[RMDB]
RNA sequence: GGGAACGACUCGAGUAGAGUCGAAAAUGUGGAAGUCCUGCUCGGGGCGGAAGCAUUAAAAGCAUUCGAGCUAGUCAAUGCGUGGCGUGUCUCUCCGCAGCGUGUUGGCGAAUGUAAAGAGUGACUAUUGACCACGCAACGUUCGCGUUGCGUGGAAGAAUAGUGUCCUGUUCGCAGGACACUAUUCAAAAGAAACAACAACAACAAC
Reactivity to 2A3 in 0.01 (KOAc 150mM, MgCl2 10mM, bicine 150mM(pH8.5), 24C), signal-to-noise 4, nucleotides 027 to 156: u020g020u000g020g020a010a030g010u020c020c010u030g040c020u020c030g010g000g010g000c020g000g020a010a000g010c010a000u110u200a030a080a030a040g110c060a080u170u200c070g010a010g000c000u010a010g010u000c010a010a010u010g010c010g030u050g160g000c000g000u000g000u000c010u000c000u000c020c000g000c010a020g000c010g000u010g000u020u000g010g000c000g010a010a000u040g030u150a020a030a010g000a000g010u010g000a010c020u040a120u100u230g080a080c010c000a000c000g000c000a000a000c000g010u040u100c210g010c000g090u010u000g000c010g000u000g000g000a000a000
Reactivity to DMS in 0.01 (KOAc 150mM, MgCl2 10mM, bicine 150mM(pH8.5), 24C), signal-to-noise 2, nucleotides 027 to 156: u010g000u000g010g000a300a300g010u010c010c020u000g030c170u000c110g000g030g040g030c000g010g000a300a300g000c030a050u000u000a040a020a100a170g010c030a120u010u000c000g010a200g010c020u000a100g030u000c030a000a020u000g000c040g020u000g010g030c000g100u000g010u000c090u000c040u010c200c030g000c050a070g040c000g030u000g030u000u000g020g020c020g000a030a040u000g000u000a030a060a140g040a060g020u000g010a120c010u000a130u000u000g000a210c000c000a030c000g000c000a000a000c010g010u000u000c260g060c100g040u000u010g010c000g020u000g000g000a010a020